[RMDB]
RNA sequence: GGGAACGACUCGAGUAGAGUCGAAAAGUGAGACCCUUCGGGGUCUCACAAAGAUCGCUGCAGCGAGCAGCACGGAGAGAACCGAACACGCACGCAAUAAAAAAAGAUCACAGUUCGCUGUGAUCAAGCUGUAUAUGACGUUCGCGUCAUAUACAGCAAAAGAAACAACAACAACAAC
Reactivity to DMS in 0.01 (KOAc 150mM, MgCl2 10mM, bicine 150mM(pH8.5), 24C), signal-to-noise 1, nucleotides 027 to 126: g030u010g010a030g030a010c000c000c000u000u040c180g010g010g030g000u000c000u010c000a000c000a040a050a100g010a070u000c060g020c040u000g000c040a090g010c080g030a040g000c020a020g030c040a060c040g000g010a110g010a070g070a100a060c050c010g020a050a040c130a060c090g020c040a010c040g020c060a120a060u000a000a000a050a150a070a100a110g010a000u000c000a000c000a030g030u010u030c180g040c010u000g000u000g000a000u000c000a040a040
Reactivity to 2A3 in 0.01 (KOAc 150mM, MgCl2 10mM, bicine 150mM(pH8.5), 24C), signal-to-noise 1, nucleotides 027 to 126: g000u000g000a000g000a000c000c000c010u010u030c200g010g000g000g010u010c000u010c000a000c000a000a010a000g020a020u070c030g000c030u030g000c010a060g040c000g160a050g000c000a000g000c030a030c020g020g020a060g010a020g000a120a020c030c000g000a050a010c030a000c080g000c000a020c040g000c040a030a130u250a250a110a020a000a010a000a020g000a000u010c000a000c000a000g020u090u080c110g000c100u000g000u000g000a000u010c000a000a000